RNA sequence: GGGAACGACUCGAGUAGAGUCGAAAAGUGAGAGGCUGUCACACGUCCAGUUGGAAUGAGGUGGAAGCUCACGGGCACCGAAAGUGGUGUGUGAAGAGAAGCCAGAUUCACUGCAAGUGAUAGGGCGACAUCGAUACAUUUUCGAAUGUAUCGAUGUAAAAGAAACAACAACAACAAC
Reactivity to DMS in 0.01 (KOAc 150mM, MgCl2 10mM, bicine 150mM(pH8.5), 24C), signal-to-noise 9, nucleotides 027 to 126: g010u000g000a060g010a120g010g010c020u010g010u010c030a060c040a070c120g010u030c080c010a130g010u020u040g010g010a080a060u010g010a200g000g020u010g000g010a120a160g000c030u010c020a060c020g000g000g010c020a040c010c020g000a090a100a110g010u040g010g010u000g010u000g010u010g000a070a080g010a090g010a190a120g010c010c010a070g010a140u030u000c010a030c000u000g010c210a120a110g010u010g000a040u010a070g000g000g010c040g000
Reactivity to 2A3 in 0.01 (KOAc 150mM, MgCl2 10mM, bicine 150mM(pH8.5), 24C), signal-to-noise 9, nucleotides 027 to 126: g100u120g020a120g000a050g050g050c030u030g030u100c010a010c000a010c060g060u040c050c020a070g060u130u190g130g040a120a100u070g020a090g090g020u030g020g050a060a030g030c000u010c010a020c000g030g080g000c010a010c020c000g100a190a200a050g210u290g040g000u020g000u020g020u010g050a090a050g030a010g020a120a010g000c010c010a030g030a110u020u030c010a000c020u070g040c110a180a150g010u020g040a020u050a040g050g030g040c020g010